[RMDB]
RNA sequence: GGGAACGACUCGAGUAGAGUCGAAAAGGUGGCUCUGAGAGUGCGUCUCCUCGUGCAGAGACAGAGUCACCGAUUUAGCAUGUUCGUCCUACGAGGCUCGUGCUAACGAUGUAGGACGUUCAUGCGAGGGAUCCAUUAGGUUCGCUUAGUGGAUCCCAAAAGAAACAACAACAACAAC
Reactivity to DMS in 0.01 (KOAc 150mM, MgCl2 10mM, bicine 150mM(pH8.5), 24C), signal-to-noise 9, nucleotides 027 to 126: g010g020u000g000g010c000u000c000u000g000a110g000a290g010u000g010c040g000u020c200u050c180c090u000c030g040u000g020c040a070g010a210g010a140c020a000g000a010g000u000c000a000c000c000g000a030u030u020u020a120g000c000a000u000g000u000u000c000g010u000c000c000u000a010c010g010a160g020g030c180u010c120g010u020g000c180u040a090a060c070g010a070u030g000u000a000g000g010a010c010g010u000u000c000a000u000g000c010g000a100
Reactivity to 2A3 in 0.01 (KOAc 150mM, MgCl2 10mM, bicine 150mM(pH8.5), 24C), signal-to-noise 9, nucleotides 027 to 126: g000g000u000g000g000c000u000c000u010g070a080g020a030g130u070g030c020g050u030c060u080c040c020u020c010g050u070g010c050a030g050a020g030a250c000a000g000a000g000u010c000a000c000c000g000a000u010u010u070a010g000c000a000u000g000u000u000c000g000u000c000c000u010a010c010g050a080g140g060c050u040c120g140u210g080c090u090a150a060c030g020a010u150g000u010a000g000g000a000c000g000u000u000c000a000u000g000c000g000a110